Chemical mapping of a 177-nucleotide RNA with DMS and 2A3. For DMS the reverse transcriptase was MarathonRT. It was measured as part of the RMDB library OK2TRN. The 2A3 profile rests on 1,205 reads. For 2A3 the reverse transcriptase was SuperScript II with manganese. For DMS, 908 sequencing reads were counted. DMS (dimethyl sulfate) methylates the pairing face of unpaired adenines and cytosines. Conditions: 150 mM KOAc, 10 mM MgCl2 and 150 mM bicine (pH 8.5), 24 C.
RNA sequence: GGGAACGACUCGAGUAGAGUCGAAAAGCCAAAUUUCUUGGCCAAUUACUGCCCUAGCCACUCUUCCUCAAGGAGUAGAAUAAAUGAGGGUCAUGAGUUCUAUCCUAUCUUCUUUCAAUUGGAAAAAGAGUAUGCCUUCAUUCGUGAAGGCAUACUCAAAAGAAACAACAACAACAAC
Reactivity to DMS in 0.01 (KOAc 150mM, MgCl2 10mM, bicine 150mM(pH8.5), 24C), signal-to-noise 1, nucleotides 027 to 126: g020c030c000a000a110a190u000u000u000c120u000u000g020g000c010c050a090a090u000u000a080c050u000g020c010c010c000u000a100g040c060c020a060c060u010c040u000u000c030c020u000c090a120a070g010g010a020g000u020a050g000a060a080u000a010a110a100u020g000a170g010g010g020u000c040a040u000g000a230g000u000u000c050u000a030u000c030c010u000a040u000c080u000u000c030u000u000u000c040a110a210u000u000g000g010a060a050a050a120a120
Reactivity to 2A3 in 0.01 (KOAc 150mM, MgCl2 10mM, bicine 150mM(pH8.5), 24C), signal-to-noise 2, nucleotides 027 to 126: g040c000c000a000a000a000u300u290u000c140u070u030g000g010c020c000a070a050u160u070a070c040u100g000c000c000c000u000a020g050c000c030a080c010u040c030u090u050c010c020u070c050a060a030g080g020a040g080u130a020g090a040a010u090a130a040a040u070g070a030g110g100g090u100c020a040u080g030a020g050u100u000c010u020a060u050c000c010u060a090u050c030u030u000c010u040u230u050c060a160a270u160u040g100g020a080a040a000a020a040